[RMDB]
Chemical mapping of a 207-nucleotide RNA with 2A3. The RNA was probed in 150 mM KOAc, 10 mM MgCl2 and 150 mM bicine (pH 8.5) at 24 C. For 2A3, 966 sequencing reads were counted. Reactivities are given for positions 27 through 156.
RNA sequence: GGGAACGACUCGAGUAGAGUCGAAAAUUUCCUCGUAAAUCCAGCAGCACACUUAUAGUUGCCAACGAAGACAACUUCGCUCUAGCCGCUUAAGGCUUAAGCCUCGAAACUGCUUGUGUCCGUGCUCGCAGCGUAGAGUCAUCAUCACGGAACCGCUCUGACAUACCUAGUUCGCUAGGUAUGUCAGAAAAGAAACAACAACAACAAC
Reactivity to 2A3 in 0.01 (KOAc 150mM, MgCl2 10mM, bicine 150mM(pH8.5), 24C), signal-to-noise 2, nucleotides 027 to 156: u030u010u020c000c010u020c020g030u070a100a100a100u110c080c050a000g030c030a000g030c040a090c000a000c130u100u110a110u040a180g000u010u020g000c000c030a040a050c060g020a050a030g000a050c020a170a130c080u070u110c030g020c010u060c020u010a020g000c000c020g050c150u170u080a110a010g000g000c000u000u000a020a040g000c000c010u060c040g090a120a000a000c010u000g010c000u030u020g050u000g030u060c010c000g000u000g000c020u020c020g000c010a030g040c020g000u010a000g020a010g030u020c060a140u070c000a020u110c000a020c000g000g010a010a010c020c010g000c060u000